[RMDB]
RNA sequence: GGGAACGACUCGAGUAGAGUCGAAAAGUCUCGCCGCACGAACUGCACGGCGGUGACACGUCGCAACCGUGGACGUACUACCUGCGCCGAGACCUGCGCGCGCUGCUCGACUGCGACUGGCUGGUCAUGCUGACCGGCUGGGAAAGCUCGACCGGCGCCAGUCAGCCGAAUUCGUUCGGCUGACUGGAAAAGAAACAACAACAACAAC
Reactivity to 2A3 in 0.01 (KOAc 150mM, MgCl2 10mM, bicine 150mM(pH8.5), 24C), signal-to-noise 2, nucleotides 027 to 156: g000u000c010u010c020g060c030c000g000c010a040c050g070a110a050c050u090g000c040a000c020g000g000c050g010g010u040g020a080c090a020c130g030u030c010g000c090a100a090c010c030g000u060g010g090a060c060g060u070a140c060u080a070c030c030u050g000c000g000c010c010g020a020g000a040c050c040u130g000c090g010c000g000c000g000c020u030g000c000u000c000g030a060c070u110g000c030g050a030c010u000g000g000c000u000g010g000u010c030a070u260g210c160u010g010a010c000c000g000g010c000u010g000g000g000a130a240a050g010c010u000c010g020a030c120c000g010g000c000g000
About this RNA:
An RNA of 207 nucleotides, treated with 2A3 and read out base by base. The data come from the RNA Mapping Database (RMDB), library OK3TST. Values cover nucleotides 27 to 156. Conditions: 150 mM KOAc, 10 mM MgCl2 and 150 mM bicine (pH 8.5), 24 C. High 2A3 reactivity points to a flexible backbone, as in loops and unpaired stretches.